Structure probing data (DMS and 2A3) for a 177-nucleotide construct. For 2A3 the reverse transcriptase was SuperScript II with manganese. DMS adducts were read by reverse transcription with MarathonRT. The 2A3 profile rests on 11,579 reads. The RNA was probed in 150 mM KOAc, 10 mM MgCl2 and 150 mM bicine (pH 8.5) at 24 C. The data come from the RNA Mapping Database (RMDB), library OK2TRN.
[RMDB]
RNA sequence: GGGAACGACUCGAGUAGAGUCGAAAAUAUUUACCGUGCGUGUAACCGUCAACGUCGACCAUGUUCAAUUCCAACAUACCGGCCUCCUCGCUGCUGAGCAUCGACAGCGGCGGCCUCCUGAUGGGCGACAGUGAUUCUUAUUCGUAAGAAUCACUGUAAAAGAAACAACAACAACAAC
Reactivity to DMS in 0.01 (KOAc 150mM, MgCl2 10mM, bicine 150mM(pH8.5), 24C), signal-to-noise 8, nucleotides 027 to 126: u010a070u010u010u000a100c040c020g010u010g020c060g020u010g020u000a070a090c060c030g010u000c050a080a100c110g010u010c050g010a070c070c070a070u000g000u000u000c080a090a160u000u000c050c030a060a080c130a060u010a100c110c060g010g000c050c020u000c030c050u000c020g010c020u010g000c020u000g010a120g010c100a070u000c100g000a080c020a030g000c040g020g010c050g000g010c040c020u000c040c040u000g000a090u000g010g000g010c080g020
Reactivity to 2A3 in 0.01 (KOAc 150mM, MgCl2 10mM, bicine 150mM(pH8.5), 24C), signal-to-noise 5, nucleotides 027 to 126: u100a030u030u090u050a090c020c040g010u050g030c030g000u080g040u060a080a080c020c000g050u040c030a050a040c030g050u020c030g030a060c020c030a040u070g030u040u100c060a090a090u150u010c030c010a030a030c020a130u140a090c060c000g070g000c000c010u020c000c000u020c020g020c020u020g000c000u020g010a040g060c030a100u120c040g070a040c010a010g010c000g010g010c000g000g000c000c000u000c000c020u090g040a090u070g020g040g020c010g000